[RMDB]
RNA sequence: GGGAACGACUCGAGUAGAGUCGAAAACCGAUGACACCAACCUGCCCUGUGACCUAUCGGCGACGAUAAGUAGCAGGGUGUUCCGUGUUGGAACCUCCACCCUUUAGGUGGAGAGAAGAUCAGUUAAGCACUCGCUGUAAUUCGUUACAGCGAGUGCAAAAGAAACAACAACAACAAC
Reactivity to DMS in 0.01 (KOAc 150mM, MgCl2 10mM, bicine 150mM(pH8.5), 24C), signal-to-noise 1, nucleotides 027 to 126: c000c000g000a090u010g000a080c100a160c020c050a060a050c040c000u000g000c000c000c010u000g000u030g000a000c170c240u000a000u000c000g070g000c300g010a300c000g000a060u000a000a000g050u000a130g010c000a000g000g000g010u000g000u000u000c070c020g000u000g000u020u110g070g000a130a160c040c000u040c000c000a000c000c080c170u020u130u110a080g000g010u000g000g000a000g000a010g000a010a050g020a230u000c010a010g010u000u060a040a300
Reactivity to 2A3 in 0.01 (KOAc 150mM, MgCl2 10mM, bicine 150mM(pH8.5), 24C), signal-to-noise 2, nucleotides 027 to 126: c020c000g040a100u150g020a000c020a000c020c000a070a000c040c060u080g000c010c000c020u000g000u000g050a040c010c010u000a000u000c000g000g000c050g110a070c000g000a010u000a020a020g000u000a000g030c000a000g000g030g000u000g000u030u000c040c020g080u110g040u080u040g010g000a000a000c000c000u000c000c000a000c000c040c000u060u280u300a120g050g000u000g000g000a020g010a020g000a020a020g060a160u100c120a050g050u020u050a120a000